Background
The record gives the reactivity of an RNA of 207 nucleotides to 2A3. Values cover nucleotides 27 to 156. Conditions: 150 mM KOAc, 10 mM MgCl2 and 150 mM bicine (pH 8.5), 24 C.
RNA sequence: GGGAACGACUCGAGUAGAGUCGAAAAACUGACGGUGCGCCGUCAGAACGGUAGAAAAGAUGGUUUGAAAACCACGCCUUCUACCAAUAUAGUAAAUAAAUAGGCGGAGCGGUCAUACGUGACCGCAAAAACAUAUUCAGCUUCGGCUGAAUAUGAACAGAGGUUUAGAGUUCGCUCUAAACCUCUGAAAAGAAACAACAACAACAAC
Reactivity to 2A3 in 0.01 (KOAc 150mM, MgCl2 10mM, bicine 150mM(pH8.5), 24C), signal-to-noise 2, nucleotides 027 to 156: a000c000u000g010a000c000g010g020u050g000c220g010c020c000g000u000c000a000g000a070a000c040g000g030u010a000g030a000a000a000a000g060a300u010g000g060u050u050u190g140a200a160a000a000c000c000a000c000g020c000c000u010u020c000u000a000c000c000a000a000u180a010u050a020g060u030a010a050a220u080a130a080a060u090a050g000g040c010g010g000a000g000c000g020g000u010c010a030u040a130c210g050u010g000a010c000c000g000c000a010a010a010a010a010c000a000u010a000u020u010c000a000g000c020u040u110c130g120g000c000u000g000a010a000u000a000u010g000a010a000